[RMDB]
RNA sequence: GGGAACGACUCGAGUAGAGUCGAAAAGCUGCCUUGAGGGACUGACGUCAGUGGGCUCCCGGGACGGCCUUGGCUGUGUGCAGUCCCCUGCUUCCCGGGUACCCUACAGCCCUGGCACUCAGCUCUGACCUUUUCUGUAGCUGGAGCCCCACGCCAAACUUUUAAUGGUAUUCGUACCAUUAAAAGUAAAAGAAACAACAACAACAAC
Reactivity to 2A3 in 0.01 (KOAc 150mM, MgCl2 10mM, bicine 150mM(pH8.5), 24C), signal-to-noise 5, nucleotides 027 to 156: g030c050u020g000c000c030u090u140g090a110g010g020g030a140c010u040g020a050c060g120u130c100a090g040u080g020g050g010c050u050c000c020c020g010g010g010a020c040g020g010c010c030u070u100g030g000c010u010g010u060g110u170g190c040a010g070u180c000c030c000c010u010g000c010u040u010c000c010c000g000g020g000u030a030c000c010c020u040a040c020a020g010c000c000c000u000g000g000c020a020c030u030c010a010g010c010u010c030u080g160a210c060c030u130u110u170u090c030u060g060u130a010g000c000u010g020g040a030g010c010c010c010c000a040c020g070c030c070a150a130
Reactivity to DMS in 0.01 (KOAc 150mM, MgCl2 10mM, bicine 150mM(pH8.5), 24C), signal-to-noise 2, nucleotides 027 to 156: g010c030u000g030c020c090u000u010g020a170g020g020g000a090c040u000g000a080c090g010u000c120a100g030u000g010g040g010c010u010c010c000c030g020g020g010a070c070g010g020c000c020u010u000g020g020c000u040g030u000g030u040g020c030a060g020u000c000c020c050c030u000g020c060u000u000c010c000c010g000g020g070u000a020c020c020c000u000a090c040a090g000c040c030c030u010g020g010c040a100c070u000c030a050g020c030u010c010u010g010a100c070c040u010u000u000u010c090u000g030u000a060g020c030u000g010g010a100g010c020c010c020c040a070c060g010c020c010a060a170